[RMDB]
RNA sequence: GGGAACGACUCGAGUAGAGUCGAAAAGCUGGUGGGAAUCGUCGUGCUAUCGAGAUCAUGCGUGAGCUGAUCGAUCCCAAAGAGUCUGAAGAACAAACCCAACUACGAGAGCAAGUAGAGGCAGUUCUAGCCAAUAUAUAUUCGUAUAUAUUGGCUAAAAAGAAACAACAACAACAAC
Reactivity to DMS in 0.01 (KOAc 150mM, MgCl2 10mM, bicine 150mM(pH8.5), 24C), signal-to-noise 9, nucleotides 027 to 126: g010c020u000g020g020u000g010g010g010a090a080u000c050g010u000c050g020u010g010c070u000a100u010c060g010a140g000a050u010c090a060u010g020c010g010u010g010a140g010c000u000g000a100u000c050g000a070u000c010c010c010a070a120a130g000a060g010u000c030u000g010a090a080g010a060a050c080a050a090a190c030c010c010a090a100c070u000a040c050g000a100g000a100g010c130a040a110g010u000a040g010a090g000g010c100a100g010u000u000c060
Reactivity to 2A3 in 0.01 (KOAc 150mM, MgCl2 10mM, bicine 150mM(pH8.5), 24C), signal-to-noise 8, nucleotides 027 to 126: g030c030u060g030g060u050g020g060g050a110a160u040c020g060u010c020g030u120g070c040u070a070u190c050g030a040g020a100u080c030a060u200g020c020g030u140g060a020g000c010u010g020a020u050c030g000a010u010c000c010c000a030a090a010g060a010g040u050c070u110g090a090a030g020a060a020c040a080a130a060c020c010c000a030a040c020u050a020c030g060a020g010a020g250c060a140a020g020u020a010g040a070g020g010c030a020g010u030u030c030
Conditions: 150 mM KOAc, 10 mM MgCl2 and 150 mM bicine (pH 8.5), 24 C. This 177-nucleotide RNA was probed chemically with DMS and 2A3. For 2A3 the reverse transcriptase was SuperScript II with manganese. Values cover nucleotides 27 to 126.